RNA sequence: GGGAACGACUCGAGUAGAGUCGAAAACAGCAGCCGUGGUGGAUCGGCGCUGACUGGUACCACCAUCACCUUAUCGACAGCGACGUCGGAAUCAACUACACGCAGUGGCAAAGCCAAGCGGGAACGAUCGGCAAACCCGUCCAGCGAGUAUACAACCCGACAAAAAGCUAUUCGUAGCUUUUUGUCGAAAAGAAACAACAACAACAAC
Reactivity to 2A3 in 0.01 (KOAc 150mM, MgCl2 10mM, bicine 150mM(pH8.5), 24C), signal-to-noise 1, nucleotides 027 to 156: c060a050g050c020a060g010c030c000g060u040g040g000u020g000g100a100u120c020g020g000c020g050c030u020g070a230c050u050g050g000u060a170c030c040a010c000c000a020u020c010a040c000c000u030u160a200u140c020g040a040c000a020g040c100g060a040c110g060u020c000g010g020a020a030u110c040a090a010c100u110a000c020a000c050g010c060a030g060u000g040g040c050a250a110a000g050c050c000a070a000g010c010g000g000g030a030a070c010g030a040u090c030g030g000c000a030a030a060c000c000c000g010u020c000c000a000g020c030g050a030g040u030a000u070a120c040a010a010c000c030

An RNA of 207 nucleotides, treated with 2A3 and read out base by base. The reactions ran in a buffer of 150 mM KOAc, 10 mM MgCl2 and 150 mM bicine (pH 8.5), at 24 C. Values are in units of 0.01, from 0 to 300, in steps of 10. High 2A3 reactivity points to a flexible backbone, as in loops and unpaired stretches.